[RMDB]
RNA sequence: GGGAACGACUCGAGUAGAGUCGAAAAAUUUAAGAGAACGGCUGGCAGAUCAUUUUGCAGCGUGGGACCUACACAUAGUACAUCGUUUAACGAUCUGCCAUUUGAGGUCCGGGCCGAUGCGUCAAAAUAAUACCCAGUGAUUCGUCACUGGGUAUUAAAAAGAAACAACAACAACAAC
Reactivity to 2A3 in 0.01 (KOAc 150mM, MgCl2 10mM, bicine 150mM(pH8.5), 24C), signal-to-noise 5, nucleotides 027 to 126: a000u160u170u110a090a040g080a010g030a110a010c000g010g010c010u020g000g000c010a000g000a020u020c020a040u060u190u260u190g050c020a020g000c010g010u040g010g000g020a000c000c020u200a060c110a010c060a170u220a030g140u130a050c030a120u060c150g110u060u110u190a110a040c040g010a000u000c000u000g000c020c000a020u070u030u080g060a000g010g000u000c000c000g000g030g000c030c020g020a040u060g000c010g050u120c020a000a100a060a000
Reactivity to DMS in 0.01 (KOAc 150mM, MgCl2 10mM, bicine 150mM(pH8.5), 24C), signal-to-noise 5, nucleotides 027 to 126: a100u030u030u050a070a090g010a110g010a120a090c030g010g010c020u000g000g010c000a020g000a020u010c030a130u020u050u030u030g010c040a030g000c040g000u010g000g000g000a030c020c010u000a130c180a150c200a080u030a090g010u000a060c150a070u010c100g010u020u010u010a080a070c090g000a010u010c030u000g010c000c010a040u000u020u000g010a040g000g000u010c000c000g000g000g030c000c010g000a160u000g010c060g000u060c080a050a070a070a120